[RMDB]
RNA sequence: GGGAACGACUCGAGUAGAGUCGAAAAGAUAUGGAACCGUUACAAGCGACGAUCUGGUCACUCGGAAACGAGUGCCAGGGAGCUUGGACGGUUCCUAAGUCAAAACUAAGGACUUCGGUCCUUAGAAGAAGAAAUGCUUGUUCGCAAGCAUUUCUUCAAAAGAAACAACAACAACAAC
Reactivity to 2A3 in 0.01 (KOAc 150mM, MgCl2 10mM, bicine 150mM(pH8.5), 24C), signal-to-noise 2, nucleotides 027 to 126: g000a010u060a020u140g020g020a020a000c020c000g010u000u060a300c040a020a000g040c000g300a300c010g020a080u000c000u000g000g110u300c080a000c000u000c000g180g090a080a080a030c020g010a010g010u000g000c020c020a000g010g000g000a000g040c010u010u020g030g020a000c050g000g000u010u030c000c000u000a000a000g030u000c050a020a000a140a130c010u020a010a010g010g000a000c020u000u180c300g160g000u000c060c020u000u000a010g000a050a020
Reactivity to DMS in 0.01 (KOAc 150mM, MgCl2 10mM, bicine 150mM(pH8.5), 24C), signal-to-noise 1, nucleotides 027 to 126: g000a040u020a300u010g000g000a000a020c000c010g000u000u000a140c010a000a010g030c010g010a120c290g010a020u030c000u000g010g000u040c030a000c000u010c010g000g000a090a090a190c000g040a000g030u000g030c020c000a010g000g030g000a010g020c010u020u010g010g020a000c020g000g000u000u000c000c000u010a010a090g010u000c040a090a100a110a240c010u000a000a000g000g000a020c000u000u010c250g020g000u010c000c000u000u000a000g000a130a160
Chemical mapping of a 177-nucleotide RNA with 2A3 and DMS.
The 2A3 profile rests on 1,787 reads.
The DMS profile rests on 1,046 reads.
It was measured as part of the RMDB library TTRDES.
The reactions ran in a buffer of 150 mM KOAc, 10 mM MgCl2 and 150 mM bicine (pH 8.5), at 24 C.
For DMS the reverse transcriptase was MarathonRT.